RNA sequence: GGGAACGACUCGAGUAGAGUCGAAAAAAGGCUUUCGAGCCUUCAAUACUCCUAAGUCCUUUCGCCAGAAGCGACGAAGUGGAGCAUCGGAAACGAUGCUAUGAAGCAGAGCUUCUGUGUCGAAAGGAUAUGGACUACAUGGCCAUUCGUGGCCAAAUCUAAGAACAAUGUUCGCAUUGUUCUUAGAAAAAGAAACAACAACAACAAC
Reactivity to DMS in 0.01 (KOAc 150mM, MgCl2 10mM, bicine 150mM(pH8.5), 24C), signal-to-noise 4, nucleotides 027 to 156: a030a040g000g010c000u000u000u000c240g030a060g020c000c010u000u000c030a080a160u010a100c100u000c000c000u010a110a240g010u000c000c000u000u010u000c010g050c030c000a020g000a050a050g020c000g020a260c110g020a120a130g020u010g010g010a040g000c000a010u010c000g020g000a200a120a300c010g020a040u000g000c010u000a040u020g010a140a280g020c030a070g010a300g010c010u000u000c020u000g010u010g040u000c010g000a050a040a050g040g010a000u010a030u000g000g010a080c070u010a080c100a110u000g020g010c000c000a100u000u000c210g030u010g010g000c000c000a010a020a050
Reactivity to 2A3 in 0.01 (KOAc 150mM, MgCl2 10mM, bicine 150mM(pH8.5), 24C), signal-to-noise 8, nucleotides 027 to 156: a000a000g080g000c070u130u120u140c240g040a020g000c010c000u010u020c020a040a040u080a110c040u040c010c000u050a120a040g050u000c000c000u000u000u000c000g000c010c000a000g000a010a000g000c020g240a290c040g040a210a020g030u060g030g040a010g000c000a000u000c000g030g010a030a050a060c010g010a010u010g000c000u050a290u300g020a020a000g030c020a010g010a010g040c000u000u010c000u010g060u050g100u080c030g000a000a000a000g000g000a000u000a000u010g000g000a010c010u070a070c080a190u090g000g000c010c000a030u080u070c240g100u120g000g000c000c000a000a030a010